[RMDB]
The record gives the reactivity of an RNA of 177 nucleotides to 2A3 and DMS.
Reactivities are rounded to 0.1 and cut off at 0 and 3.
Source: RMDB library OK2TST, as collected in RNAgym.
The reactions ran in a buffer of 150 mM KOAc, 10 mM MgCl2 and 150 mM bicine (pH 8.5), at 24 C.
Reactivities are given for positions 27 through 126.
The DMS profile rests on 12,580 reads.

RNA sequence: GGGAACGACUCGAGUAGAGUCGAAAAGCGCACCACUCGCACCGGCGCCGCCGUCAGCCAAGCAAGAAUCCACAUCACGAGAAACCCGAAGAUCAACGUGGUUAUCGACAGGAUCAACACCGCCGACGUAUGAAAUAGUUUUCGAACUAUUUCAUACAAAAGAAACAACAACAACAAC
Reactivity to 2A3 in 0.01 (KOAc 150mM, MgCl2 10mM, bicine 150mM(pH8.5), 24C), signal-to-noise 7, nucleotides 027 to 126: g020c020g010c020a030c040c000a040c030u070c030g030c010a040c040c010g040g000c030g010c010c020g020c010c000g020u040c000a010g020c020c010a040a010g020c010a040a050g040a080a030u010c010c000a030c010a110u100c030a020c070g030a040g030a090a040a020c020c000c020g030a080a030g040a170u150c050a040a080c030g060u140g010g040u040u030a060u050c010g060a070c030a060g000g040a030u030c020a020a050c020a020c030c010g050c020c020g070a060c070
Reactivity to DMS in 0.01 (KOAc 150mM, MgCl2 10mM, bicine 150mM(pH8.5), 24C), signal-to-noise 9, nucleotides 027 to 126: g010c080g000c060a100c030c040a080c060u000c080g020c060a100c090c040g000g010c050g010c050c040g010c030c020g000u000c040a070g010c030c040a070a110g010c080a080a070g010a100a080u000c030c020a050c090a060u000c080a110c050g000a090g010a070a070a060c020c000c020g010a080a090g010a090u010c140a070a080c060g010u000g010g010u000u000a170u000c020g010a100c100a090g000g000a050u010c050a060a080c080a070c040c040g010c030c030g010a090c200
2A3 adducts were read by reverse transcription with SuperScript II with manganese. For DMS the reverse transcriptase was MarathonRT. As a SHAPE reagent, 2A3 marks flexible, mostly unpaired nucleotides at the ribose 2'-OH. For 2A3, 19,695 sequencing reads were counted.